[RMDB]
An RNA of 177 nucleotides, treated with 2A3 and DMS and read out base by base. For DMS the reverse transcriptase was MarathonRT. The 2A3 profile rests on 33,325 reads. 2A3 adducts were read by reverse transcription with SuperScript II with manganese. 2A3 is a SHAPE reagent: it acylates the 2'-hydroxyl of flexible nucleotides of all four kinds. In probing experiments dimethyl sulfate is read out at A N1 and C N3, which are open when not base-paired. For DMS, 14,370 sequencing reads were counted.

RNA sequence: GGGAACGACUCGAGUAGAGUCGAAAAGAUAUGGACGUUACGGCUAGAAACACUCGGAAACGAGUGGAUUUCUUGGACCCGUGCGUCCUAAGUCAAACUCCCUGCACUCCUUCGGGAGUGCAGGGAGGAGAAUAGUCUAGUUCGCUAGACUAUUCUCAAAAGAAACAACAACAACAAC
Reactivity to 2A3 in 0.01 (KOAc 150mM, MgCl2 10mM, bicine 150mM(pH8.5), 24C), signal-to-noise 4, nucleotides 027 to 126: g010a010u040a020u090g000g000a000c010g020u110u300a010c010g100g000c040u050a010g000a000a020a010c000a000c010u010c010g020g010a060a040a020c020g000a010g020u010g000g020a040u020u030u000c010u090u300g080g060a060c000c010c010g010u000g000c000g000u000c000c000u000a020a010g020u010c020a030a030a170c010u000c000c010c000u010g000c010a000c000u020c010c010u070u190c300g220g000g000a000g000u000g010c000a000g000g000g000a000g000
Reactivity to DMS in 0.01 (KOAc 150mM, MgCl2 10mM, bicine 150mM(pH8.5), 24C), signal-to-noise 8, nucleotides 027 to 126: g000a020u000a170u010g000g010a010c010g010u000u020a010c010g010g020c030u000a010g010a010a030a050c000a010c000u000c000g010g000a050a040a080c010g000a010g010u000g010g000a170u000u000u000c000u000u010g020g010a050c300c000c010g010u000g010c000g000u000c000c000u000a000a060g000u000c010a140a120a300c010u000c000c000c010u000g000c000a010c000u010c000c000u000u010c210g010g010g000a010g020u000g000c000a000g000g000g000a000g000